This 207-nucleotide RNA was probed chemically with DMS and 2A3. For DMS the reverse transcriptase was MarathonRT. The DMS profile rests on 3,430 reads. For 2A3, 4,904 sequencing reads were counted. Source: RMDB library M2RFPK, as collected in RNAgym. For 2A3 the reverse transcriptase was SuperScript II with manganese. The RNA was probed in 150 mM KOAc, 10 mM MgCl2 and 150 mM bicine (pH 8.5) at 24 C.
RNA sequence: GGGAACGACUCGAGUAGAGUCGAAAAGUUUAUGCAUAGGCACUUCGCAAUGUGUGCUCAAACAUUGCUUAUUCAAACACGCUUCACAAUGUGCGACAAAGAAACAUUGUUAUAAGAGCUAAUGUUUACCACGCCUAAAGGUUCGCCUUUAGGCGAACGAUUGAUGAGUCUUCGGACUCAUCAAUCGAAAAGAAACAACAACAACAAC
Reactivity to DMS in 0.01 (KOAc 150mM, MgCl2 10mM, bicine 150mM(pH8.5), 24C), signal-to-noise 2, nucleotides 027 to 156: g020u000u000u000a040u000g010c030a230u000a140g030g020c040a080c050u000u000c120g040c090a070a070u000g030u000g000u000g030c020u000c030a210a150a000c000a020u000u000g000c010u000u000a080u010u000c050a120a110a120c070a060c070g040c030u000u010c140a060c000a080a040u010g030u000g010c040g020a220c090a080a090a060g000a160a110a020c000a060u010u000g000u010u000a070u000a050a070g000a070g040c050u000a110a150u000g030u000u000u000a120c030c080a170c030g000c040c000u000a010a020a020g010g010u000u010c300g040c040c010u000u000u020a010g000g020c010g000a000a010
Reactivity to 2A3 in 0.01 (KOAc 150mM, MgCl2 10mM, bicine 150mM(pH8.5), 24C), signal-to-noise 7, nucleotides 027 to 156: g030u100u140u100a130u150g040c060a070u090a120g140g000c010a020c040u070u080c090g020c040a040a020u030g030u010g040u040g020c060u090c130a030a040a010c010a010u010u010g000c010u080u110a160u140u180c070a020a050a020c080a020c090g010c000u020u030c020a000c000a000a010u010g010u000g010c000g060a070c140a080a140a020g100a030a050a000c000a010u000u010g030u030u070a200u040a120a110g030a010g040c050u100a110a050u070g010u010u030u030a110c070c040a060c020g000c010c000u010a010a000a000g040g020u020u080c180g150c010c000u010u000u000a000g000g000c000g000a010a000